This 177-nucleotide RNA was probed chemically with DMS and 2A3.
In probing experiments dimethyl sulfate is read out at A N1 and C N3, which are open when not base-paired.
The data come from the RNA Mapping Database (RMDB), library OK1LIB.
2A3 adducts were read by reverse transcription with SuperScript II with manganese.
Values cover nucleotides 27 to 126.
RNA sequence: GGGAACGACUCGAGUAGAGUCGAAAACGAUAGGACUGAUGCGCCAUUCACAAGUGUGUGUGAGGUUAAUAAAGUAUUAGUCAAAGGCGGUCGAGCUAAACCUGACGAGCUAAUUAAAGCAUCAGAAAUCCCAAGAAGUGUUCGCACUUCUUGGGAUAAAAGAAACAACAACAACAAC
Reactivity to DMS in 0.01 (KOAc 150mM, MgCl2 10mM, bicine 150mM(pH8.5), 24C), signal-to-noise 3, nucleotides 027 to 126: c070g020a170u080a040g020g030a210c000u000g000a010u000g000c010g000c050c030a070u000u000c000a040c010a100a250g060u040g010u060g040u010g020u030g010a080g000g030u000u030a120a090u020a090a060a140g050u040a050u000u000a050g030u000c000a060a200a090g000g020c050g040g010u010c200g000a090g040c070u000a070a190a150c060c000u010g010a080c170g000a140g010c010u000a050a030u000u010a030a030a100g020c010a020u000c030a000g000a090a070
Reactivity to 2A3 in 0.01 (KOAc 150mM, MgCl2 10mM, bicine 150mM(pH8.5), 24C), signal-to-noise 4, nucleotides 027 to 126: c030g060a060u100a100g110g090a030c000u000g010a000u020g000c000g010c000c000a070u110u110c000a010c010a130a200g130u120g040u040g010u020g030u040g300a020g000g010u040u070a060a030u120a100a250a010g090u090a060u030u020a000g000u020c000a000a000a060g050g010c080g000g010u200c100g020a030g110c080u190a130a000a040c000c000u010g020a060c090g020a010g000c000u000a000a000u010u090a180a060a000g020c000a010u010c000a020g000a060a090